[RMDB]
RNA sequence: GGGAACGACUCGAGUAGAGUCGAAAAUUGCUAAGGGUGAUAGCUGUUCUUCUAAUUGCAAACAUUCAGUUGCUCAGUUGGUUAGUUACCUUUCUGAACGCUGUAAUGUUAUUGCUGAUUCUAAGUCGAUAUUUUACACGUUCGCGUGUAAAAUAUCAAAAGAAACAACAACAACAAC
Reactivity to DMS in 0.01 (KOAc 150mM, MgCl2 10mM, bicine 150mM(pH8.5), 24C), signal-to-noise 4, nucleotides 027 to 126: u000u000g010c030u000a060a110g010g020g000u010g000a110u000a040g010c020u000g010u000u000c040u000u000c080u010a090a100u010u000g010c020a060a030a050c010a010u000u000c010a010g000u000u010g050c030u000c000a010g010u010u000g000g010u000u010a190g000u010u000a090c010c010u000u010u000c000u000g010a010a020c000g010c010u000g000u000a010a010u000g000u000u010a070u010u010g030c010u000g010a060u010u000c080u000a070a100g010u010c150
Reactivity to 2A3 in 0.01 (KOAc 150mM, MgCl2 10mM, bicine 150mM(pH8.5), 24C), signal-to-noise 4, nucleotides 027 to 126: u090u060g000c010u040a060a070g110g060g050u100g060a050u020a010g010c020u010g050u030u020c010u080u000c020u060a080a110u130u070g000c010a020a010a020c000a020u010u000c000a010g020u090u130g210c000u000c010a010g000u020u010g010g020u030u040a030g010u060u110a040c000c000u020u090u050c000u010g000a000a000c000g000c010u030g060u240a010a000u010g000u010u040a070u020u030g000c000u010g030a080u070u000c040u090a070a060g070u060c020

The data come from the RNA Mapping Database (RMDB), library 15KREP. The record gives the reactivity of an RNA of 177 nucleotides to DMS and 2A3. The RNA was probed in 150 mM KOAc, 10 mM MgCl2 and 150 mM bicine (pH 8.5) at 24 C. DMS adducts were read by reverse transcription with MarathonRT. The DMS profile rests on 6,207 reads.